[RMDB]
RNA sequence: GGGAACGACUCGAGUAGAGUCGAAAAAUGGUGACGGCCAUCGAUGCCUUCAUGAACGACAUCCAGCCUUUCAUGGUGGGCGAUGCGGUUGCCGACUUCUCCGAGGAAGAACAUCGCCUUGCGCUGACCGUGCCUCAUUAUUCGUAAUGAGGCACGGAAAAGAAACAACAACAACAAC
Reactivity to DMS in 0.01 (KOAc 150mM, MgCl2 10mM, bicine 150mM(pH8.5), 24C), signal-to-noise 2, nucleotides 027 to 126: a070u010g010g000u000g000a030c040g000g020c170c060a020u000c040g020a060u010g000c000c000u000u000c020a020u010g000a020a030c050g020a050c020a170u000c300c240a170g000c030c010u010u000u010c010a000u000g000g000u000g010g000g010c010g000a040u000g000c040g000g020u000u010g010c010c020g010a080c110u000u000c010u000c010c060g000a070g000g000a110a080g000a140a160c170a050u010c120g000c010c040u000u000g040c090g030c060u000g010a200
Reactivity to 2A3 in 0.01 (KOAc 150mM, MgCl2 10mM, bicine 150mM(pH8.5), 24C), signal-to-noise 2, nucleotides 027 to 126: a000u160g000g000u000g020a020c010g070g010c070c000a000u000c010g040a050u130g230c020c000u050u030c000a000u000g010a020a000c030g050a040c030a070u100c070c050a060g000c020c000u000u080u030c030a030u040g020g010u060g070g020g000c020g020a060u140g040c020g070g000u010u010g020c000c020g020a050c010u030u030c040u010c020c010g050a080g090g010a060a070g060a070a030c060a090u080c060g030c000c000u050u100g070c110g000c070u030g030a050
Structure probing data (DMS and 2A3) for a 177-nucleotide construct. The DMS profile rests on 2,207 reads. For DMS the reverse transcriptase was MarathonRT. The reactions ran in a buffer of 150 mM KOAc, 10 mM MgCl2 and 150 mM bicine (pH 8.5), at 24 C. For 2A3 the reverse transcriptase was SuperScript II with manganese. For 2A3, 2,560 sequencing reads were counted.